[RMDB]
RNA sequence: GGGAACGACUCGAGUAGAGUCGAAAAGGUGACCUGGACGGGAAGUAGCUCCAGCGACUGCUUCCGAAGCUUUGAUAAGAGCAACUCCAUCUACGUUGCUCAAGUAGGUGGUAGCAGCAAACACCGAAUGGGUAGGACCUUUCGAGGUCCUACCCAUAAAAGAAACAACAACAACAAC
Reactivity to DMS in 0.01 (KOAc 150mM, MgCl2 10mM, bicine 150mM(pH8.5), 24C), signal-to-noise 2, nucleotides 027 to 126: g050g090u010g000a130c060c000u000g000g000a180c020g010g000g030a150a030g020u000a070g000c070u020c020c040a020g000c160g090a300c000u000g030c000u000u010c000c010g040a160a270g010c010u000u000u080g020a150u050a100a120g000a000g080c000a020a000c040u010c090c130a090u080c070u010a030c050g040u000u040g000c060u000c030a030a020g030u020a050g000g050u030g020g010u020a020g020c080a120g000c020a080a080a040c000a080c000c000g030a150
Reactivity to 2A3 in 0.01 (KOAc 150mM, MgCl2 10mM, bicine 150mM(pH8.5), 24C), signal-to-noise 2, nucleotides 027 to 126: g120g000u010g020a110c020c020u010g080g000a060c100g120g000g030a030a030g000u090a000g000c110u150c060c040a020g020c040g050a050c000u000g010c000u030u000c000c000g010a000a000g000c010u010u030u080g140a200u250a190a080g010a000g000c000a000a040c000u020c030c000a050u070c050u090a070c080g120u090u080g120c020u080c130a060a050g000u000a010g010g020u030g010g050u050a000g000c020a000g000c000a010a010a010c010a000c020c000g000a070